[RMDB]
RNA sequence: GGGAACGACUCGAGUAGAGUCGAAAAGACUGCGGUGGUUGCAAUGGCUGUGAAAUUGAGAUUUUCUCUUCAAUUACACCGCUGUUCGACACCGAGCGAUUUGGCAUCAAAGUGGUUGCCUCACCACUCUUUAAGUACGGUUCGCCGUACUUAAAGAAAAAGAAACAACAACAACAAC
Reactivity to DMS in 0.01 (KOAc 150mM, MgCl2 10mM, bicine 150mM(pH8.5), 24C), signal-to-noise 6, nucleotides 027 to 126: g000a170c110u010g030c000g010g020u000g000g000u020u000g030c200a030a020u000g000g010c010u000g010u000g010a060a020a010u000u010g000a040g000a060u010u010u010u010c260u000c020u000u010c000a010a020u000u000a110c000a010c000c130g000c000u000g010u000u000c000g000a020c010a020c010c000g010a040g020c040g000a220u000u000u000g010g000c070a090u010c080a080a090a150g010u000g000g020u000u000g010c300c020u000c140a130c010c020a060c100
Reactivity to 2A3 in 0.01 (KOAc 150mM, MgCl2 10mM, bicine 150mM(pH8.5), 24C), signal-to-noise 5, nucleotides 027 to 126: g060a010c070u130g080c110g020g000u050g010g180u230u030g000c030a010a020u010g010g000c010u010g020u000g030a030a010a010u010u010g010a010g020a030u090u050u300u120c130u030c000u120u130c020a000a010u000u010a020c000a000c010c020g000c010u010g010u000u000c010g000a000c000a000c000c010g000a020g010c020g050a060u100u050u170g070g020c050a100u040c080a200a120a110g040u030g040g020u030u020g040c000c010u000c000a040c010c000a020c030
Structure probing data (DMS and 2A3) for a 177-nucleotide construct. DMS adducts were read by reverse transcription with MarathonRT. In probing experiments dimethyl sulfate is read out at A N1 and C N3, which are open when not base-paired. The DMS profile rests on 7,612 reads. Source: RMDB library OK2TST, as collected in RNAgym. Conditions: 150 mM KOAc, 10 mM MgCl2 and 150 mM bicine (pH 8.5), 24 C.